The data come from the RNA Mapping Database (RMDB), library TTRDES. The record gives the reactivity of an RNA of 177 nucleotides to DMS and 2A3. For 2A3 the reverse transcriptase was SuperScript II with manganese. The reactions ran in a buffer of 150 mM KOAc, 10 mM MgCl2 and 150 mM bicine (pH 8.5), at 24 C. DMS adducts were read by reverse transcription with MarathonRT. For DMS, 3,698 sequencing reads were counted.
[RMDB]
RNA sequence: GGGAACGACUCGAGUAGAGUCGAAAAGAUAUGGACGCAUCCACACACAGCGAAGAACGCUAUCGGAAACGAUAGCGGGAGCUGGAGUGGAGUGCGUCCUAAGUCAAAAGGUAGCUUCGGCUACCAACCAUUAAGUGCUGUUCGCAGCACUUAAUGGAAAAGAAACAACAACAACAAC
Reactivity to DMS in 0.01 (KOAc 150mM, MgCl2 10mM, bicine 150mM(pH8.5), 24C), signal-to-noise 3, nucleotides 027 to 126: g010a080u000a300u020g000g000a010c000g030c000a050u000c000c000a020c000a060c220a300c020a010g000c000g010a100a140g000a160a240c000g010c000u000a000u000c010g010g010a150a110a190c000g010a000u000a010g000c000g020g010g010a050g020c000u010g000g010a120g060u000g000g000a020g020u010g020c000g010u000c000c000u000a000a080g010u000c040a120a090a120a120g000g020u010a030g000c000u000u000c220g000g000c000u000a000c000c010a050a070
Reactivity to 2A3 in 0.01 (KOAc 150mM, MgCl2 10mM, bicine 150mM(pH8.5), 24C), signal-to-noise 3, nucleotides 027 to 126: g040a030u110a060u160g000g020a010c000g020c000a010u030c000c010a010c000a020c000a000c000a010g030c030g200a300a030g040a070a010c000g010c010u000a000u000c000g010g030a120a080a050c020g000a000u000a010g000c010g000g020g010a000g000c000u030g010g010a030g010u020g000g030a030g020u030g000c000g010u000c000c000u000a000a010g010u000c010a000a030a030a190g000g000u000a000g000c010u080u090c300g130g000c000u020a010c000c000a020a000